[RMDB]
RNA sequence: GGGAACGACUCGAGUAGAGUCGAAAAGGUCGCUGGCGAGCCCGUCCACGAUCAAACUCUCGGGAACCGUGUUGUGUUGCCGCGCGGCCAACCGGACGCUGCGAUCGGUGCAGGUCAGAAACGCCGGCGUUGCCAGAGUAUUCGUACUCUGGCAACGAAAAGAAACAACAACAACAAC
Reactivity to DMS in 0.01 (KOAc 150mM, MgCl2 10mM, bicine 150mM(pH8.5), 24C), signal-to-noise 3, nucleotides 027 to 126: g010g030u000c050g010c160u020g000g000c110g020a150g030c080c010c020g010u040c000c040a090c020g020a010u010c010a040a100a140c060u000c000u020c000g000g000g010a120a070c060c010g030u020g040u000u000g020u020g000u000u000g010c020c000g060c080g030c030g040g000c070c030a060a130c070c060g010g000a020c150g000c080u000g000c130g010a090u030c050g000g010u000g000c020a000g000g010u000c110a120g010a110a090a180c060g000c010c020g040g010
Reactivity to 2A3 in 0.01 (KOAc 150mM, MgCl2 10mM, bicine 150mM(pH8.5), 24C), signal-to-noise 3, nucleotides 027 to 126: g030g000u080c030g020c120u000g030g000c010g040a030g100c010c020c010g060u110c020c000a130c030g020a020u050c030a000a040a140c030u010c050u060c020g030g000g050a050a060c030c010g010u030g000u090u140g050u020g090u040u140g050c000c000g000c000g000c000g010g000c020c000a050a050c010c000g030g000a080c090g030c190u050g020c020g060a050u080c040g060g020u060g040c060a060g000g040u060c000a010g150a030a070a000c010g010c010c020g010g000